[RMDB]
RNA sequence: GGGAACGACUCGAGUAGAGUCGAAAAGACCGCAGAAGCGGAAACGGCGAAAACGUACGGAAGAAUACGCACGAGCGGAAGGCUGGAUAGCGACCGAGAGGUCGCAACGCCGAAUGAUCCAGAAGAACAUUAGCACUAUCUUCGGAUAGUGCUAAUGAAAAGAAACAACAACAACAAC
Reactivity to 2A3 in 0.01 (KOAc 150mM, MgCl2 10mM, bicine 150mM(pH8.5), 24C), signal-to-noise 7, nucleotides 027 to 126: g030a010c000c000g000c020a040g050a300a030g020c010g020g020a050a040a030c030g020g000c010g030a070a010a070a120c040g070u200a080c040g050g030a070a030g060a100a080u110a070c010g010c020a040c080g030a040g020c020g010g040a030a010g050g000c010u020g000g040a060u090a070g000c000g000a010c000c010g030a040g020a020g070g000u000c000g000c000a000a000c010g000c000c000g000a010a020u150g010a010u010c010c010a020g030a060a020g030a140a010
Reactivity to DMS in 0.01 (KOAc 150mM, MgCl2 10mM, bicine 150mM(pH8.5), 24C), signal-to-noise 6, nucleotides 027 to 126: g010a160c000c000g010c020a100g010a150a120g020c010g030g000a030a080a090c040g000g010c030g010a130a070a090a120c060g010u010a030c030g000g000a090a080g020a140a100u030a100c030g000c040a090c070g010a210g000c050g000g010a090a060g010g010c020u000g010g010a040u010a110g010c000g010a010c000c000g000a150g000a210g000g000u000c000g010c000a010a010c050g000c030c010g010a070a070u030g000a060u010c020c000a050g000a130a100g000a080a170